The record gives the reactivity of an RNA of 177 nucleotides to 2A3 and DMS. Values cover nucleotides 27 to 126. It was measured as part of the RMDB libraries RFM100 and RFMREP.
RNA sequence: GGGAACGACUCGAGUAGAGUCGAAAACUGCCCUUAUAGUGCAAAGCAUGGUUGUAAUUCCGGCAACCCGGAGACGUUCUGGACGCGGGUUCGAUUCCCGCCACCUCCACAGUGGGCAUUCUCAAGACAGAUGCAAAGCAUUCGUGCUUUGCAUCUGAAAAGAAACAACAACAACAAC
Reactivity to 2A3 in 0.01 (KOAc 150mM, MgCl2 10mM, bicine 150mM(pH8.5), 24C), signal-to-noise 7, nucleotides 027 to 126: c020u030g010c010c000c000u050u080a300u110a100g060u060g060c070a140a060a040g030c030a090u100g050g000u010u030g050u090a150a230u170u060c060c030g040g000c020a030a020c010c000c030g020g000a020g000a030c060g040u080u070c060u130g060g040a040c060g000c000g010g000g000u050u050c040g020a030u060u080c010c000c010g010c000c000a020c010c010u030c020c010a020c000a040g070u080g020g000g000c010a020u030u000c020u010c020a020a040g090a060
Reactivity to DMS in 0.01 (KOAc 150mM, MgCl2 10mM, bicine 150mM(pH8.5), 24C), signal-to-noise 4, nucleotides 027 to 126: c200u020g000c000c000c000u000u020a050u020a110g010u010g000c140a090a110a070g030c100a100u010g010g030u020u000g010u010a100a130u010u020c030c070g010g020c060a050a070c080c010c100g020g000a070g010a090c040g010u000u010c010u000g000g040a130c150g030c020g010g020g030u000u020c150g000a300u020u000c010c000c000g030c000c110a080c080c010u020c080c020a050c130a020g010u010g000g000g020c030a030u000u000c020u000c030a060a130g000a270